[RMDB]
Description:
Conditions: 150 mM KOAc, 10 mM MgCl2 and 150 mM bicine (pH 8.5), 24 C. Structure probing data (2A3 and DMS) for a 177-nucleotide construct. Source: RMDB library M2PK50, as collected in RNAgym.
RNA sequence: GGGAACGACUCGAGUAGAGUCGAAAACCACCGCAAUUCGUUGCGGUGGGAAGGUGCAAUUCGCUGUCUGCACGACAGACGGCCAAUCCGUCAAAGCGAAAACUGGAGGGUCAUUCGUGACCCUCAAUAACCUAAAUCAUUUCGAUGAUUUAGGUUAAAAAGAAACAACAACAACAAC
Reactivity to 2A3 in 0.01 (KOAc 150mM, MgCl2 10mM, bicine 150mM(pH8.5), 24C), signal-to-noise 9, nucleotides 027 to 126: c000c000a000c000c000g010c000a020a020u070u050c180g060u110u020g000c000g000g000u000g000g000g010a030a060g100g010u060g010c040a100a200u050u030c010g000c010u010g020u050c030u050g070c050a030c100g070a020c020a010g010a000c000g000g000c040c030a040a060u090c010c010g030u040c040a080a060a030g020c010g050a020a010a010a050c080u150g140g010a000g000g000g000u000c010a020u030u050c090g060u030g000a000c000c000c000u000c000a010a000
Reactivity to DMS in 0.01 (KOAc 150mM, MgCl2 10mM, bicine 150mM(pH8.5), 24C), signal-to-noise 9, nucleotides 027 to 126: c000c000a010c000c010g010c000a010a020u000u010c200g020u000u000g020c000g010g020u000g010g000g000a040a040g010g010u000g010c050a130a120u000u000c050g010c000u000g020u000c040u000g010c060a070c110g000a080c030a120g000a010c010g010g000c150c200a080a110u010c010c010g000u000c030a060a120a060g010c020g000a040a040a090a070c190u010g010g000a010g010g000g010u000c000a040u000u010c160g010u000g000a010c000c000c000u000c000a010a040